This 177-nucleotide RNA was probed chemically with DMS and 2A3. Reactivities are given for positions 27 through 126.
[RMDB]
RNA sequence: GGGAACGACUCGAGUAGAGUCGAAAAAGAAAGAACUUUAUUCAAACUAUGGCAACGUGAUGACUUUUGGUGAAUCACAAGGUCUGACCUUCAACUGUGGAGUGAUUGUUCUUUCCGAGGAAGCAAACUACCCCAGAUCCUUCGGGAUCUGGGGUAGAAAAGAAACAACAACAACAAC
Reactivity to DMS in 0.01 (KOAc 150mM, MgCl2 10mM, bicine 150mM(pH8.5), 24C), signal-to-noise 2, nucleotides 027 to 126: a110g020a000a060a000g080a000a000c030u020u000u020a030u050u030c040a000a060a010c040u000a010u010g010g000c040a050a080c300g000u000g020a020u000g000a060c050u000u000u010u030g000g080u050g000a220a120u000c030a010c020a000a010g030g000u020c020u000g000a300c300c020u010u030c240a100a150c010u000g000u000g000g000a080g000u000g000a030u000u000g010u010u000c000u010u000u000c020c060g080a070g000g050a160a080g000c110a080a100a080
Reactivity to 2A3 in 0.01 (KOAc 150mM, MgCl2 10mM, bicine 150mM(pH8.5), 24C), signal-to-noise 2, nucleotides 027 to 126: a010g030a010a040a000g010a020a000c030u160u120u030a040u100u000c060a140a080a080c020u060a050u080g070g000c060a010a050c090g060u050g020a000u060g030a030c000u120u190u120u200g140g040u220g240a180a130u190c060a060c040a090a000g010g000u000c020u010g090a140c000c000u090u130c130a160a130c080u090g010u010g020g080a040g040u020g050a060u040u040g020u000u000c000u000u000u000c020c000g010a010g080g100a010a050g090c000a000a090a000
For DMS, 1,581 sequencing reads were counted. For DMS the reverse transcriptase was MarathonRT. Conditions: 150 mM KOAc, 10 mM MgCl2 and 150 mM bicine (pH 8.5), 24 C.